[RMDB]
RNA sequence: GGGAACGACUCGAGUAGAGUCGAAAAGUGCAGCUCGGCGCGCGCUCCGCGGGACAGCAGGUCCUCGCAGAUGUAUUCGGCGAUGUCGCGGGUCGAGCCCUGGGCGGUGGCGAACAGGACCGCGACACACGAGGUAGUACUUCGGUACUACCUCGUGAAAAGAAACAACAACAACAAC
Reactivity to DMS in 0.01 (KOAc 150mM, MgCl2 10mM, bicine 150mM(pH8.5), 24C), signal-to-noise 4, nucleotides 027 to 126: g020u000g020c060a130g010c030u000c020g020g010c030g020c020g030c050g000c040u000c030c070g040c040g000g010g010a020c010a150g020c170a150g010g000u000c010c010u000c030g040c030a040g000a070u000g010u000a180u010u010c010g000g020c040g000a110u000g010u000c000g020c010g000g040g010u000c000g000a030g000c030c010c010u000g000g010g010c010g000g020u010g010g010c030g000a060a080c100a090g000g000a120c010c000g020c010g000a080c060a110
Reactivity to 2A3 in 0.01 (KOAc 150mM, MgCl2 10mM, bicine 150mM(pH8.5), 24C), signal-to-noise 2, nucleotides 027 to 126: g040u040g050c060a020g000c040u020c050g010g000c050g030c000g000c010g010c130u020c030c040g000c060g000g020g030a020c010a090g220c060a110g240g200u050c010c040u070c040g000c020a010g020a130u150g090u190a230u040u130c010g040g010c050g040a040u040g060u150c020g000c010g020g000g080u000c010g000a000g000c020c000c000u030g040g030g000c030g010g080u110g100g130c050g020a110a030c030a080g070g060a010c010c000g010c010g020a010c030a000